[RMDB]
RNA sequence: GGGAACGACUCGAGUAGAGUCGAAAAAUUUACAAGGCAUAACUCCUAGGUGAGGUCAUUCACUAGCCAUUUCUUGUAUUUGAGGGUCUCAGUGUGACAUCCCAACUUCAUUUCCAGCACUAGAUUGAUUCAGGAGAUGGUUCGCCAUCUCCUGAAUAAAAGAAACAACAACAACAAC
Reactivity to 2A3 in 0.01 (KOAc 150mM, MgCl2 10mM, bicine 150mM(pH8.5), 24C), signal-to-noise 1, nucleotides 027 to 126: a030u080u190u130a080c020a010a070g040g000c000a030u030a130a000c050u070c030c000u050a120g050g060u030g060a090g030g160u090c070a120u190u000c040a050c020u020a090g050c010c010a050u060u090u020c030u030u070g120u040a140u010u070u100g100a100g010g000g120u040c020u000c070a050g040u020g030u050g020a010c020a110u090c000c010c000a030a030c010u090u080c000a080u110u010u010c010c000a020g000c030a010c020u070a020g050a270u000u170g050
Reactivity to DMS in 0.01 (KOAc 150mM, MgCl2 10mM, bicine 150mM(pH8.5), 24C), signal-to-noise 2, nucleotides 027 to 126: a070u010u020u010a050c060a030a060g020g010c100a080u010a060a110c090u000c080c020u000a110g000g010u020g010a070g000g010u000c140a070u010u000c020a070c050u000a070g020c120c060a060u000u010u000c010u000u000g000u000a050u000u000u000g000a100g020g010g000u010c040u020c130a020g020u000g000u000g010a070c110a050u000c030c000c010a020a070c140u010u000c070a120u010u000u000c010c030a080g020c110a050c080u000a030g000a150u000u000g010
Conditions: 150 mM KOAc, 10 mM MgCl2 and 150 mM bicine (pH 8.5), 24 C.
An RNA of 177 nucleotides, treated with 2A3 and DMS and read out base by base.
For DMS the reverse transcriptase was MarathonRT.